[RMDB]
RNA sequence: GGGAACGACUCGAGUAGAGUCGAAAAGGUGGCAUAGGAGCGCCAGGGGCGCCAGCGAGCGCUGUGCACCGUCAGGGCUCGUCGUUGUGCAGGCAGGCCCAGCUUUUUGGCGGCCAGCCGCAGGCCGACGAAAAGGAUAUUUCGAUAUCCUUUUCGUAAAAGAAACAACAACAACAAC
Reactivity to DMS in 0.01 (KOAc 150mM, MgCl2 10mM, bicine 150mM(pH8.5), 24C), signal-to-noise 9, nucleotides 027 to 126: g010g020u000g010g020c020a110u000a100g010g010a080g010c030g020c020c030a120g010g010g010g020c030g020c030c040a080g010c020g010a090g020c080g010c010u000g000u010g010c050a090c070c060g000u010c090a060g000g000g010c010u000c030g010u000c050g010u000u000g010u000g020c040a110g020g010c020a080g010g010c010c020c070a140g010c080u000u000u010u010u010g010g010c020g000g000c010c010a060g010c020c010g010c040a070g000g010c020c030g000
Reactivity to 2A3 in 0.01 (KOAc 150mM, MgCl2 10mM, bicine 150mM(pH8.5), 24C), signal-to-noise 5, nucleotides 027 to 126: g070g000u030g030g000c030a050u090a180g070g040a110g120c030g030c020c020a060g060g040g010g000c030g010c010c010a010g010c020g060a040g010c130g030c110u020g030u080g030c120a150c110c040g100u090c040a030g030g050g000c010u010c030g020u010c030g060u080u160g070u100g100c080a070g020g000c010a010g060g000c000c010c010a030g020c000u130u150u040u140u200g050g000c000g000g000c000c010a020g020c010c000g000c000a010g030g050c010c010g010